[RMDB]
RNA sequence: GGGAACGACUCGAGUAGAGUCGAAAAAUAUUUUGGCCCAGGAAUGAGUCCUGGAGGGGAGUGCUGCCCCAUGGGAAUAAGUGGUCAUCCUGCAUGGCAUUAACAACUGGCAGUCAGGUCACCUACACACCCUGUGUAGGUUCGCCUACACAGGGUGAAAAGAAACAACAACAACAAC
Reactivity to DMS in 0.01 (KOAc 150mM, MgCl2 10mM, bicine 150mM(pH8.5), 24C), signal-to-noise 2, nucleotides 027 to 126: a060u000a090u000u010u010u020g030g010c040c000c000a070g040g010a060a150u000g000a140g000u000c000c000u000g000g010a110g000g010g000g000a070g000u010g010c110u000g000c050c000c020c080a080u020g000g010g010a110a060u000a040a130g010u010g000g010u000c040a100u000c040c020u000g000c060a050u000g000g020c050a070u010u000a090a090c250a060a090c120u010g000g010c050a030g000u000c040a050g020g000u000c100a070c040c040u000a070c200a220
Reactivity to 2A3 in 0.01 (KOAc 150mM, MgCl2 10mM, bicine 150mM(pH8.5), 24C), signal-to-noise 2, nucleotides 027 to 126: a000u150a100u010u070u060u040g060g000c020c020c000a000g020g050a210a170u240g040a070g180u020c000c000u030g000g030a110g000g020g000g010a050g090u140g050c110u110g010c000c000c020c030a050u050g060g000g020a090a070u160a200a000g000u050g060g080u030c020a030u020c030c000u000g010c030a070u070g000g050c000a020u140u110a100a080c060a030a000c040u030g070g000c000a010g040u050c010a000g020g040u030c040a030c030c050u100a040c070a020